Structure probing data (DMS and 2A3) for a 207-nucleotide construct. For DMS the reverse transcriptase was MarathonRT. The data come from the RNA Mapping Database (RMDB), library RNAMAK.

RNA sequence: GGGAACGACUCGAGUAGAGUCGAAAAGACGAUCCGUUCGCGGAUCGUCAAAAAAGAUAUGGAUAUCAGUUGGGAGGCUCACGCUUCGGAAACGAAGCAAGAGCCGAGGAUCAACGAUAUCCUAAGUCAAAAACAGAUCUGGUUCGCCAGAUCUGAACAUUAGUAGUGCCUUCGGGCACUACUAAUGAAAAGAAACAACAACAACAAC
Reactivity to DMS in 0.01 (KOAc 150mM, MgCl2 10mM, bicine 150mM(pH8.5), 24C), signal-to-noise 1, nucleotides 027 to 156: g000a030c000g030a050u000c020c020g030u000u040c270g080c050g000g000a010u010c000g110u020c000a000a000a110a180a150a080g010a060u000a200u000g000g000a030u020a000u000c010a190g050u000u000g000g000g030a180g000g030c010u000c010a120c300g010c000u000u000c000g000g000a130a100a220c000g000a030a000g020c010a220a190g020a070g060c020c000g000a030g040g000a060u000c000a030a020c000g000a040u000a010u000c000c000u010a020a120g010u000c020a060a000a070a190a120c060a030g000a000u000c000u000g000g000u000u010c300g010c100c000a010g000a010u000c000u030g000a070a090
Reactivity to 2A3 in 0.01 (KOAc 150mM, MgCl2 10mM, bicine 150mM(pH8.5), 24C), signal-to-noise 1, nucleotides 027 to 156: g000a000c020g000a010u010c000c000g020u040u110c300g010c020g080g000a010u000c000g000u000c010a050a000a050a000a000a000g020a000u030a010u010g000g000a010u000a000u010c040a050g010u000u000g010g000g000a050g000g000c000u010c010a020c100g000c010u010u000c000g000g000a000a020a010c000g010a000a000g000c020a040a040g020a010g000c010c000g010a010g000g000a000u010c000a000a000c000g000a000u000a000u000c000c000u000a020a000g000u000c050a000a000a010a110a180c010a000g000a010u000c000u010g000g050u090u100c210g090c120c000a000g000a010u000c000u000g000a030a010